[RMDB]
Structure probing data (2A3 and DMS) for a 207-nucleotide construct.
The data come from the RNA Mapping Database (RMDB), library M2RFPK.
For DMS, 2,041 sequencing reads were counted.
Values are in units of 0.01, from 0 to 300, in steps of 10.
The reactions ran in a buffer of 150 mM KOAc, 10 mM MgCl2 and 150 mM bicine (pH 8.5), at 24 C.
RNA sequence: GGGAACGACUCGAGUAGAGUCGAAAAGUAUCCCUAGAUGAUAAAACACCGCACAUGGCUCGUAAGAGCGGUUAAAUUAGCAAGUAAUGCAAAUUACGCGAGGUAAGGCAUGGCCUAGGCUCGUUAGAAAAGGGAGAAUCCUUCGGGAUUCUCCCAAGUUGAACUACUACUUCGGUAGUAGUUCAACAAAAGAAACAACAACAACAAC
Reactivity to 2A3 in 0.01 (KOAc 150mM, MgCl2 10mM, bicine 150mM(pH8.5), 24C), signal-to-noise 1, nucleotides 027 to 156: g060u010a080u070c000c020c000u020a070g030a100u120g010a000u170a160a110a120a030c070a070c000c040g060c030a070c030a210u100g100g000c040u050c100g080u030a170a050g020a010g070c040g000g000u010u010a000a140a080u090u100a010g010c100a150a050g100u080a170a040u060g020c040a070a070a040u160u030a020c020g000c000g000a010g000g060u160a010a010g030g010c250a270u200g110g000c030c000u030a040g140g120c010u010c020g050u020u030a070g150a030a030a000a020g000g000g000a000g010a000a000u000c000c000u010u010c080g060g000g000a000u000u010c020u000c000c050c000a000a000
Reactivity to DMS in 0.01 (KOAc 150mM, MgCl2 10mM, bicine 150mM(pH8.5), 24C), signal-to-noise 1, nucleotides 027 to 156: g000u000a120u010c000c000c000u000a120g010a170u000g010a090u010a070a130a160a140c080a050c040c000g010c090a120c080a130u000g020g040c000u010c020g080u030a150a180g000a040g030c000g030g000u000u000a050a060a180u010u000a180g010c010a070a150g000u010a030a110u000g000c120a030a080a090u010u000a080c100g010c020g000a070g050g030u000a030a040g000g050c000a230u000g040g020c020c000u000a120g000g000c020u000c020g000u020u020a140g020a070a180a090a170g000g020g020a050g020a010a010u000c000c020u010u000c300g050g000g010a020u000u000c020u000c000c000c000a020a000